[RMDB]
RNA sequence: GGGAACGACUCGAGUAGAGUCGAAAAGAAUGGAGUUGUGGUCAACACCGAGCGAUCGGUUGUCGAAGAGAUCGUACCUGAUGAAUACGACAGCGACAGUGACUUUUCAAUGGGUUUGGGUGAAGUGGACUCUUCCCUCAUUCGUGAGGGAAGAGUCAAAAGAAACAACAACAACAAC
Reactivity to 2A3 in 0.01 (KOAc 150mM, MgCl2 10mM, bicine 150mM(pH8.5), 24C), signal-to-noise 1, nucleotides 027 to 126: g090a040a070u180g010g020a090g000u060u010g030u120g060g020u010c050a050a030c020a010c080c010g000a000g000c030g050a050u010c000g040g000u070u070g000u000c020g000a110a010g070a030g010a300u000c010g000u030a020c020c050u120g100a170u150g050a090a040u120a000c010g000a000c050a010g010c010g030a020c010a030g060u000g070a020c080u190u100u060u160c100a070a050u070g000g010g060u180u060u110g020g030g010u080g050a070a030g070u130g150
Reactivity to DMS in 0.01 (KOAc 150mM, MgCl2 10mM, bicine 150mM(pH8.5), 24C), signal-to-noise 2, nucleotides 027 to 126: g010a180a090u000g010g000a110g010u010u000g030u000g010g000u000c040a090a060c300a090c000c010g000a000g020c300g000a150u000c030g010g030u000u010g040u010c040g000a060a060g020a170g010a110u000c010g020u010a080c080c030u020g010a120u010g020a180a170u000a030c040g030a070c050a110g000c020g010a020c010a080g010u010g000a060c050u000u000u010u030c030a040a060u010g010g010g000u000u000u020g000g000g010u000g000a050a050g010u000g010
This 177-nucleotide RNA was probed chemically with 2A3 and DMS. The 2A3 profile rests on 878 reads. For 2A3 the reverse transcriptase was SuperScript II with manganese. Reactivities are rounded to 0.1 and cut off at 0 and 3. The reactions ran in a buffer of 150 mM KOAc, 10 mM MgCl2 and 150 mM bicine (pH 8.5), at 24 C.